About this RNA
This 207-nucleotide RNA was probed chemically with 2A3. Values cover nucleotides 27 to 156. The RNA was probed in 150 mM KOAc, 10 mM MgCl2 and 150 mM bicine (pH 8.5) at 24 C.
RNA sequence: GGGAACGACUCGAGUAGAGUCGAAAAUAAUAGCAUCCUUCACCGUGGGAAUGGGCUGUGUAUUGGUACCAGCCAUGCUACUGAACUCACUUAACUUUAAUAGUCAGAUUCAAAAAAUGCGGUUUACCACAAUAAUGGGCCUUUCAUUAAUUGGGAGACAAGAUCCCGUAUUCGUACGGGAUCUUGUAAAAGAAACAACAACAACAAC
Reactivity to 2A3 in 0.01 (KOAc 150mM, MgCl2 10mM, bicine 150mM(pH8.5), 24C), signal-to-noise 2, nucleotides 027 to 156: u190a010a010u050a010g000c050a070u030c000c000u060u040c090a030c040c020g000u090g070g020g000a050a130u150g090g010g000c000u000g060u010g020u150a140u170u290g230g060u030a000c000c000a010g000c000c000a010u030g000c000u010a030c010u000g040a110a060c020u010c030a000c010u120u230a210a110c010u110u080u200a050a080u180a140g000u000c010a020g000a110u090u070c080a070a070a020a000a110a240u080g010c010g000g120u030u020u050a090c020c000a040c000a050a060u060a040a000u030g000g000g080c020c090u080u300u100c030a040u000u120a060a050u070u030g020g020g000a120g000